The record gives the reactivity of an RNA of 177 nucleotides to 2A3 and DMS. For DMS the reverse transcriptase was MarathonRT. The RNA was probed in 150 mM KOAc, 10 mM MgCl2 and 150 mM bicine (pH 8.5) at 24 C. High DMS reactivity at an A or C suggests that its Watson-Crick edge is free.

RNA sequence: GGGAACGACUCGAGUAGAGUCGAAAAUUGUAACCCGAGUGGGGGCAUUAAAGUGAUGUGAACACUGUUGUAGCGCUGCGGGCCUGGUCUGGGUGUGCUACUGCUGGCCCGCCCGUUCCAAGUUGCGCUUGUACAUCUGUUUCGACAGAUGUACAAGAAAAGAAACAACAACAACAAC
Reactivity to 2A3 in 0.01 (KOAc 150mM, MgCl2 10mM, bicine 150mM(pH8.5), 24C), signal-to-noise 3, nucleotides 027 to 126: u120u060g040u050a110a130c010c000c000g000a010g000u070g000g000g010g020g000c020a020u100u120a170a110a060g080u130g050a100u080g060u060g110a100a000c030a020c050u070g030u010u090g070u040a020g050c010g020c070u100g000c020g010g030g000c030c030u010g020g000u050c040u020g030g010g050u120g030u000g110c030u060a060c040u060g140c060u030g020g000c000c060c000g000c020c000c000g040u000u030c010c010a080a080g000u010u040g070c060g000
Reactivity to DMS in 0.01 (KOAc 150mM, MgCl2 10mM, bicine 150mM(pH8.5), 24C), signal-to-noise 5, nucleotides 027 to 126: u020u030g010u010a100a140c010c010c000g010a080g020u010g000g020g010g010g030c050a050u030u010a050a090a060g010u010g010a070u010g000u010g010a240a100c020a020c020u010g010u000u010g010u010a070g010c070g000c070u010g010c020g010g000g000c040c040u000g000g010u010c050u000g000g000g010u000g020u010g020c030u000a030c110u010g000c110u010g000g010c000c010c060g000c010c140c010g000u010u010c030c020a040a080g000u000u010g000c070g010